RNA sequence: GGGAACGACUCGAGUAGAGUCGAAAAGAUAUGGAUGAUUGGGAGAAUGCGGUCGGAAACGACCGACAUUCGAAGAACAAUAUCCUAAGUCGGACUCAAUGGUGUAUCUUCGGAUACACCAUUGAAACAUGGCAAUCGUGUUCGCACGAUUGCCAUGAAAAGAAACAACAACAACAAC
Reactivity to DMS in 0.01 (KOAc 150mM, MgCl2 10mM, bicine 150mM(pH8.5), 24C), signal-to-noise 1, nucleotides 027 to 126: g000a020u000a040u020g000g000a010u000g000a030u010u000g000g000g010a030g000a010a000u000g000c020g000g000u000c000g030g010a020a020a020c020g020a020c000c000g000a070c010a000u000u000c010g000a080a140g020a100a200c050a000a010u000a110u000c000c000u000a010a110g000u010c000g000g010a220c120u000c000a000a000u010g010g000u000g000u000a000u000c010u000u010c160g030g000a010u000a000c000a000c000c000a000u000u000g000a010a090a210